[RMDB]
RNA sequence: GGGAACGACUCGAGUAGAGUCGAAAAGGUGAACUACCUGUAGCUGUAGUCAAUGAUAAGAUCUUCACCAAGAGUGGCGUUAAUGACAUUUGUAUGUUUGAGAAUAAAACCACUUUGCCUACUAAUACACGGCGCAUCUUCGGAUGCGCCAAAAGAAACAACAACAACAAC
Reactivity to 2A3 in 0.01 (KOAc 150mM, MgCl2 10mM, bicine 150mM(pH8.5), 24C), signal-to-noise 3, nucleotides 027 to 129: g000g000u040g020a070a040c000u020a040c000c010u050g100u170a080g010c100u030g010u000a020g000u050c070a070a050u040g030a050u070a140a050g010a050u030c060u010u030c010a000c020c000a050a030g010a000g000u000g020g010c040g020u060u160a020a040u110g030a010c000a000u110u140u090g230u180a120u110g050u010u020u070g060a110g050a060a000u090a080a100a040a020c050c010a000c000u000u000u040g070c000c000u040a060c000u050a060a070u090a050c150a000c040
Reactivity to DMS in 0.01 (KOAc 150mM, MgCl2 10mM, bicine 150mM(pH8.5), 24C), signal-to-noise 2, nucleotides 027 to 129: g120g100u000g070a080a130c090u000a090c030c070u010g070u030a130g020c220u080g000u010a040g000u000c000a050a040u040g070a110u020a080a090g030a300u030c030u030u050c000a040c050c000a110a030g020a000g020u070g060g020c100g010u000u000a030a070u020g020a030c070a010u010u000u090g010u000a030u000g000u050u040u000g020a050g050a070a130u040a000a000a000a000c040c010a050c100u000u020u000g000c080c010u000a090c130u020a060a120u000a020c120a030c120